[RMDB]
Description
This 177-nucleotide RNA was probed chemically with 2A3 and DMS. For DMS, 1,097 sequencing reads were counted.
RNA sequence: GGGAACGACUCGAGUAGAGUCGAAAAUGGCCAGAGAGCUAGCCAAGAAAGUUGCGUCAACACUGUCAGGCGACCAAAGGAUUGGACUGGUACCUAGAAAUGGCGUCGACCAUUGGGACGCCUACAAGGUGCCCACAUAAUUCGUUAUGUGGGCACCAAAAGAAACAACAACAACAAC
Reactivity to 2A3 in 0.01 (KOAc 150mM, MgCl2 10mM, bicine 150mM(pH8.5), 24C), signal-to-noise 1, nucleotides 027 to 126: u060g040g000c000c000a040g070a000g000a010g090c040u030a010g000c020c000a010a050g130a020a010a000g090u070u050g020c030g020u080c030a090a000c060a050c100u080g040u090c040a020g000g020c010g000a050c000c000a010a020a010g060g000a190u060u090g020g000a010c020u010g040g030u080a070c010c000u040a040g100a050a120a050u110g010g040c000g020u010c060g060a060c000c020a040u040u060g040g060g000a020c000g010c000c010u000a000c030a040a070
Reactivity to DMS in 0.01 (KOAc 150mM, MgCl2 10mM, bicine 150mM(pH8.5), 24C), signal-to-noise 2, nucleotides 027 to 126: u000g020g000c000c040a090g020a120g030a150g020c040u010a050g000c030c020a110a140g000a090a140a090g020u010u000g040c100g030u030c080a030a100c080a120c050u010g000u000c080a100g010g010c060g000a130c070c000a000a070a050g000g000a090u010u010g020g010a060c060u000g020g020u000a120c010c010u000a050g030a070a120a170u010g010g000c010g030u000c020g020a120c060c050a160u000u030g010g000g000a050c000g020c000c000u000a040c130a040a080
Source: RMDB library OK2TST, as collected in RNAgym.